[RMDB]
RNA sequence: GGGAACGACUCGAGUAGAGUCGAAAAUAGCCGUUAUGCGCGAAGCGGUGUAGCGUCACUUUGAUGGCGGUACUAUGAAUUGAUGCAAGGUGUGGAGCGACCUUAAACAGUUCUGGUGGUGCACUGAAAAACAAAUAGGCGUUCGCGCCUAUUUGAACCUUUUCAGAAGCUUCGGCUUCUGAAAAGGAAAAGAAACAACAACAACAAC
Reactivity to 2A3 in 0.01 (KOAc 150mM, MgCl2 10mM, bicine 150mM(pH8.5), 24C), signal-to-noise 3, nucleotides 027 to 156: u070a000g030c010c000g020u060u030a090u140g080c070g030c010g030a010a010g020c040g010g040u050g040u100a020g070c010g000u010c020a020c090u180u140u210g140a220u090g030g000c030g000g050u010a010c010u030a030u140g050a050a050u100u040g050a060u100g090c020a030a020g030g000u020g010u060g030g040a020g030c020g000a020c000c000u030u120a100a110a000c010a030g010u030u010c010u030g040g030u040g000g020u020g010c030a000c050u040g030a040a050a030a060a030c000a000a010a000u000a000g010g010c000g010u050u040c210g020c000g000c040c000u000a000u000u010u000g000a000a020